[RMDB]
RNA sequence: GGGAACGACUCGAGUAGAGUCGAAAAUGGACUCCAGGGCUGGUCACAGAAGGCUCUGGGCUCCAACCUGGCUUGCUGGACGUGCUCUUGAAGCCCCCAAGUAAGAAGUCUGAGUCCCUGAGACCACCCACUCACAUUAGUUCGCUAAUGUGAGUGGAAAAGAAACAACAACAACAAC
Reactivity to 2A3 in 0.01 (KOAc 150mM, MgCl2 10mM, bicine 150mM(pH8.5), 24C), signal-to-noise 2, nucleotides 027 to 126: u030g000g000a000c000u000c030c030a000g010g000g000c040u060g000g120u240c130a070c020a250g270a140a040g050g000c010u010c020u030g000g010g000c020u000c010c000a010a030c010c010u010g040g000c000u000u050g000c010u040g020g020a050c070g090u110g010c000u000c030u150u190g140a160a040g000c010c000c030c000c030a030a020g030u020a040a050g050a100a020g000u000c010u020g020a010g020u010c000c010c020u070g050a080g020a060c020c000a010c040
Reactivity to DMS in 0.01 (KOAc 150mM, MgCl2 10mM, bicine 150mM(pH8.5), 24C), signal-to-noise 3, nucleotides 027 to 126: u020g030g010a050c010u000c000c020a030g020g010g000c050u000g000g020u020c180a140c230a190g000a110a270g010g010c000u000c010u000g000g030g000c210u010c010c030a030a100c050c040u000g010g010c040u000u000g000c010u000g000g000a070c030g010u000g020c020u000c050u000u010g020a150a080g000c020c020c020c020c030a030a040g020u010a060a040g010a120a070g000u010c030u020g030a210g000u000c010c010c010u010g000a100g010a130c100c060a130c140

Annotation: Chemical mapping of a 177-nucleotide RNA with 2A3 and DMS. Reactivities are given for positions 27 through 126.